An RNA of 177 nucleotides, treated with 2A3 and DMS and read out base by base. For 2A3 the reverse transcriptase was SuperScript II with manganese. Values cover nucleotides 27 to 126. For DMS the reverse transcriptase was MarathonRT. For DMS, 2,457 sequencing reads were counted. The reactions ran in a buffer of 150 mM KOAc, 10 mM MgCl2 and 150 mM bicine (pH 8.5), at 24 C.
RNA sequence: GGGAACGACUCGAGUAGAGUCGAAAAGGGGCGAUGCGGAAACGGCAGGAAUGCGCAUUCCGGAAACGACAGCAGCAGAGCCCGCUAUACGUGAAGGAUUGGCUGAAGCGUAUUGAAAUACUGAGCCGACUAGCAUAUACUUCGGUAUAUGCUAGUCAAAAGAAACAACAACAACAAC
Reactivity to 2A3 in 0.01 (KOAc 150mM, MgCl2 10mM, bicine 150mM(pH8.5), 24C), signal-to-noise 3, nucleotides 027 to 126: g040g010g020g010c030g020a030u030g020c000g000g050a020a070a010c030g010g000c050a030g010g060a020a030u120g110c180g030c150a020u000u010c000c000g000g010a000a050a010c000g070a020c030a020g020c000a010g020c030a030g020a020g090c000c020c000g000c000u010a000u000a010c020g000u030g060a030a010g060g070a120u240u300g250g010c010u010g020a030a020g000c000g020u010a020u010u050g020a050a050a010u150a130c040u070g050a030g070c040c040
Reactivity to DMS in 0.01 (KOAc 150mM, MgCl2 10mM, bicine 150mM(pH8.5), 24C), signal-to-noise 4, nucleotides 027 to 126: g020g000g010g010c000g010a130u000g010c000g000g010a090a030a010c050g010g010c290a250g010g010a020a020u000g000c240g020c180a150u010u000c000c000g000g010a040a040a050c030g000a050c240a160g020c060a090g000c100a050g020a300g010c000c000c010g000c050u000a020u000a010c010g000u000g010a150a110g000g000a300u020u010g010g010c020u000g000a240a300g000c010g010u000a010u000u010g000a060a030a110u020a080c090u010g010a080g010c110c130